[RMDB]
RNA sequence: GGGAACGACUCGAGUAGAGUCGAAAAGGAGGACGAAGCAUAUUUCUGUUUCUAGAGGAUUAUUUAUAAUCUGCCGGAAAGUCUUGCAGGUGGCUGGGAUAUGUUCAGUCUGGUAGAAUUAAGCACGAAAACGUGUCCUUGUUCGCAAGGACACGAACUCAUCUUAGUAGUUCGCUACUAAGAUGAGAAAAGAAACAACAACAACAAC
Reactivity to DMS in 0.01 (KOAc 150mM, MgCl2 10mM, bicine 150mM(pH8.5), 24C), signal-to-noise 2, nucleotides 027 to 156: g020g020a120g030g020a040c060g000a110a130g030c020a100u000a020u000u000u000c010u010g010u000u000u010c000u000a030g000a080g000g000a020u000u000a060u000u000u000a040u000a040a020u000c000u000g000c020c020g000g000a050a060a070g000u010c040u000u000g020c070a090g000g040u010g010g010c040u010g010g010g030a040u000a040u000g010u000u000c050a190g040u020c020u000g000g080u000a080g000a070a090u010u000a060a060g040c040a090c070g000a060a040a060a170c020g020u010g000u000c010c010u000u000g020u000u000c300g000c020a020a020g000g010a010c000a010c020g000a010a060
Reactivity to 2A3 in 0.01 (KOAc 150mM, MgCl2 10mM, bicine 150mM(pH8.5), 24C), signal-to-noise 4, nucleotides 027 to 156: g050g000a030g010g010a010c030g020a060a000g050c020a040u040a070u140u090u050c040u050g060u020u080u040c050u060a030g020a040g070g030a010u040u030a050u030u270u030a090u040a070a040u020c020u050g040c040c020g030g020a100a090a050g080u050c040u070u080g000c030a020g010g030u030g020g000c020u060g000g000g020a030u040a020u080g090u100u090c050a020g020u000c010u050g000g040u030a040g050a060a030u120u120a090a010g050c060a020c110g060a010a020a050a030c000g010u000g000u000c000c000u000u000g010u060u050c150g000c120a000a010g010g010a010c000a000c000g000a000a000
Structure probing data (DMS and 2A3) for a 207-nucleotide construct. For 2A3 the reverse transcriptase was SuperScript II with manganese.